About this RNA
The record gives the reactivity of an RNA of 177 nucleotides to DMS. For DMS the reverse transcriptase was MarathonRT. It was measured as part of the RMDB library M2PK50. For DMS, 1,906 sequencing reads were counted.
RNA sequence: GGGAACGACUCGAGUAGAGUCGAAAAGAUGAUUAGUUCGCUAAUCAUCAAAGAACGGUGCAACGCGCAGAGAGCGCGCGAGAGCGAGAAUGCGCGAAGAAAAAAGUUACGGGUUCGCCCGUAACAACGAUUCAUAUGGGUUCGCCCAUAUGAAUCGAAAAGAAACAACAACAACAAC
Reactivity to DMS in 0.01 (KOAc 150mM, MgCl2 10mM, bicine 150mM(pH8.5), 24C), signal-to-noise 3, nucleotides 027 to 126: g020a010u000g010a000u000u000a000g030u000u010c230g070c020u000a000a000u000c000a000u020c010a050a090a080g010a130a080c090g000g010u020g050c080a060a150c010g000c010g010c020a050g000a190g020a150g000c050g020c000g000c110g000a180g000a130g000c000g000a040g000a070a160u000g000c010g000c000g020a060a150g020a000a090a060a120a100a100g000u000u000a000c020g000g010g020u000u020c300g000c000c000c000g010u000a000a000c020a060a120